[RMDB]
RNA sequence: GGGAACGACUCGAGUAGAGUCGAAAACUCGCGGCGUCAGCAUUGCUGAUGAGUUUGACGAGCGCGUCGAGGCUGCACGCGCCGCCGCAGACAGUGGUGAUUUUGCGUUGUAUAUCAGCGCGCAGGGUGGGGCAAAUGUCCCGCGCGAUUGUCAGACAUACUCGUACGUUUUCGAACGUACGAGUAUAAAAGAAACAACAACAACAAC
Reactivity to DMS in 0.01 (KOAc 150mM, MgCl2 10mM, bicine 150mM(pH8.5), 24C), signal-to-noise 1, nucleotides 027 to 156: c010u010c010g020c050g020g000c000g000u000c050a140g000c070a290u000u010g000c030u020g040a080u000g000a070g050u020u000u010g000a040c080g020a070g000c000g030c000g000u000c050g020a060g020g020c070u000g020c100a070c070g000c060g020c070c000g000c000c000g030c090a170g000a150c150a060g040u000g000g050u010g000a170u000u000u000u000g040c010g010u010u000g000u000a180u020a120u000c020a070g040c030g010c000g020c020a060g020g040g020u000g010g010g060g000c010a110a090a130u000g000u000c010c000c000g040c000g000c020g020a080u000u000g010u000c000a080g020a100c090
Reactivity to 2A3 in 0.01 (KOAc 150mM, MgCl2 10mM, bicine 150mM(pH8.5), 24C), signal-to-noise 1, nucleotides 027 to 156: c020u020c050g010c050g060g020c000g020u000c010a030g000c120a280u020u300g000c040u020g010a010u040g050a020g010u020u090u130g020a030c010g020a030g080c010g000c010g030u090c090g030a150g200g000c040u080g000c020a010c100g020c010g030c010c010g020c000c020g020c010a020g090a070c110a020g050u060g090g030u170g060a140u080u110u190u210g030c000g010u010u060g050u070a180u000a020u250c010a020g010c000g000c000g000c070a020g040g020g020u070g010g010g000g000c050a140a120a150u290g040u110c010c010c000g010c000g000c000g030a020u090u000g010u010c010a000g000a020c050
Structure probing data (DMS and 2A3) for a 207-nucleotide construct.
For DMS the reverse transcriptase was MarathonRT.
Conditions: 150 mM KOAc, 10 mM MgCl2 and 150 mM bicine (pH 8.5), 24 C.